[RMDB]
RNA sequence: GGGAACGACUCGAGUAGAGUCGAAAAGCACAAAGCUGGAAUAACCCUGCCAGUUCUUAGAAGCUUUAAGAUUCAUCGUCUUGAACUUGAUACACAUAGUAUAGCACCUUAAAAACGAAUCAUCUGCGAAAGUGUAUCUGUUCGCAGAUACACUUUCAAAAGAAACAACAACAACAAC
Reactivity to 2A3 in 0.01 (KOAc 150mM, MgCl2 10mM, bicine 150mM(pH8.5), 24C), signal-to-noise 2, nucleotides 027 to 126: g000c020a040c030a130a080a020g010c020u020g030g030a090a050u100a100a110c000c020c000u040g020c000c010a030g060u120u000c030u040u110a090g030a140a010g040c000u030u020u070a070a020g020a050u080u090c000a020u040c110g030u010c020u030u000g010a040a010c000u040u090g000a020u050a100c050a010c010a100u110a030g060u050a030u050a070g000c020a070c030c000u060u040a090a120a030a030a040c010g010a020a040u080c000a040u000c060u050g000c020
Reactivity to DMS in 0.01 (KOAc 150mM, MgCl2 10mM, bicine 150mM(pH8.5), 24C), signal-to-noise 3, nucleotides 027 to 126: g010c020a100c160a110a090a110g010c010u000g000g010a130a070u010a130a130c020c030c020u000g010c010c020a030g010u000u010c070u020u000a090g020a110a120g010c050u000u000u000a010a160g010a040u000u000c100a060u000c100g000u000c030u000u000g010a040a110c040u000u000g000a040u000a030c040a060c120a090u000a050g020u010a060u000a050g010c060a080c070c040u010u020a030a050a040a100a070c100g000a090a060u010c070a060u000c020u000g010c300